[RMDB]
RNA sequence: GGGAACGACUCGAGUAGAGUCGAAAAGAUAUGGAAUUCGUGGUGAGCAUCGAUCUCGGAAACGAGGGAGCUCUAACACGAGAUUCCUAAGUCAAAACCUUUUCAGGGCUUCGGCCCUGAAAAGGAACGUACUCUAGAUGUUCGCAUCUAGAGUACGAAAAGAAACAACAACAACAAC
Reactivity to DMS in 0.01 (KOAc 150mM, MgCl2 10mM, bicine 150mM(pH8.5), 24C), signal-to-noise 3, nucleotides 027 to 126: g000a060u010a300u010g000g000a020a010u000u000c000g030u000g000g020u010g000a020g020c000a290u000c200g010a070u030c000u020c010g000g010a110a080a190c010g010a000g000g000g000a040g050c000u000c010u000a060a100c010a010c000g000a060g000a010u000u000c010c000u010a070a170g000u000c050a100a070a140a130c000c010u000u010u000u000c010a010g000g010g020c010u000u010c240g020g000c000c000c000u010g000a000a000a000a010g000g010a020a040
Reactivity to 2A3 in 0.01 (KOAc 150mM, MgCl2 10mM, bicine 150mM(pH8.5), 24C), signal-to-noise 3, nucleotides 027 to 126: g040a030u100a020u210g000g000a000a020u010u020c000g000u010g020g020u060g020a000g000c030a200u300c060g080a100u030c010u000c010g020g060a100a090a050c010g000a010g000g000g010a010g000c000u000c010u050a190a010c020a000c000g050a040g030a030u000u000c000c010u010a150a010g070u030c040a020a040a120a290c010c000u040u000u000u010c000a020g000g000g000c000u080u160c300g150g000c070c000c000u000g000a010a000a000a000g000g000a000a000
The record gives the reactivity of an RNA of 177 nucleotides to DMS and 2A3. High 2A3 reactivity points to a flexible backbone, as in loops and unpaired stretches. The DMS profile rests on 3,327 reads. Values are in units of 0.01, from 0 to 300, in steps of 10. Conditions: 150 mM KOAc, 10 mM MgCl2 and 150 mM bicine (pH 8.5), 24 C.